The record gives the reactivity of an RNA of 177 nucleotides to DMS. The data come from the RNA Mapping Database (RMDB), library OK2TST. The DMS profile rests on 825 reads. The reactions ran in a buffer of 150 mM KOAc, 10 mM MgCl2 and 150 mM bicine (pH 8.5), at 24 C.
RNA sequence: GGGAACGACUCGAGUAGAGUCGAAAAAACGGUGUAUUACCGGUUUGCUACCAGGGAAGAACGGGAAGGAAAGAUGAGCACGAACCUGGUUUUUAAGGAGUGUCGCCAGAGUGCCGCGAUGAAACGGUAGCCUGCGAGAAUUCGUUCUCGCAGGCUAAAAAGAAACAACAACAACAAC
Reactivity to DMS in 0.01 (KOAc 150mM, MgCl2 10mM, bicine 150mM(pH8.5), 24C), signal-to-noise 1, nucleotides 027 to 126: a020a060c030g000g000u020g000u000a160u030u000a080c000c000g020g030u010u000u000g050c050u010a100c050c020a080g010g040g000a100a070g040a140a070c100g000g010g020a080a140g000g010a060a080a090g000a060u000g000a100g010c010a050c050g040a190a100c070c000u010g000g010u000u010u000u010u000a150a070g020g020a110g000u000g000u010c030g020c010c000a060g000a100g010u010g010c010c040g000c010g000a140u020g010a070a050a090c100g010g010